This 207-nucleotide RNA was probed chemically with DMS and 2A3. The data come from the RNA Mapping Database (RMDB), library OK3TST. In probing experiments dimethyl sulfate is read out at A N1 and C N3, which are open when not base-paired. The DMS profile rests on 3,880 reads. For DMS the reverse transcriptase was MarathonRT. The RNA was probed in 150 mM KOAc, 10 mM MgCl2 and 150 mM bicine (pH 8.5) at 24 C.
RNA sequence: GGGAACGACUCGAGUAGAGUCGAAAAUGUCACUUGAUGUGAGUACAUGGUGGAAACACUAAUGUCACUUGAUGUGAGUACAUAGUGUUGGAUACACUAUGUACUCACAAGCAGUAAGUGACUGCUAAUGUACUCACAAGCAGUAAGUGACUGCUAACGAUACCUCGUAUUUCGAUACGAGGUAUCGAAAAGAAACAACAACAACAAC
Reactivity to DMS in 0.01 (KOAc 150mM, MgCl2 10mM, bicine 150mM(pH8.5), 24C), signal-to-noise 2, nucleotides 027 to 156: u000g010u000c000a000c010u000u020g000a210u000g020u000g010a050g000u010a010c000a030u010g040g010u010g010g010a300a180a280c080a060c050u010a190a170u000g000u000c070a030c010u020u010g010a220u000g010u000g010a010g000u010a000c000a000u010a010g020u000g000u000u020g070g010a300u000a010c010a010c000u000a000u000g010u000a000c000u000c010a030c000a010a050g040c050a160g020u010a020a020g000u000g020a100c000u000g010c160u000a110a070u000g000u000a010c000u020c060a020c000a020a050g050c090a150g020u010a040a060g010u010g000a080c010u000g000c040u010a140a300
Reactivity to 2A3 in 0.01 (KOAc 150mM, MgCl2 10mM, bicine 150mM(pH8.5), 24C), signal-to-noise 3, nucleotides 027 to 156: u110g000u010c010a000c030u040u070g020a020u030g060u000g010a000g010u000a000c000a010u030g050g000u010g010g090a090a100a040c070a030c070u090a170a010u110g020u010c010a010c010u000u030g060a050u050g030u000g000a000g000u000a000c000a000u010a000g000u010g030u010u120g200g060a110u060a180c000a000c000u000a000u000g000u000a010c000u000c000a000c000a000a000g000c010a000g080u280a170a000g000u000g000a040c010u000g000c010u090a260a050u010g000u010a010c010u000c000a000c000a000a000g010c010a030g040u190a130a000g000u000g000a020c000u010g010c000u010a160a000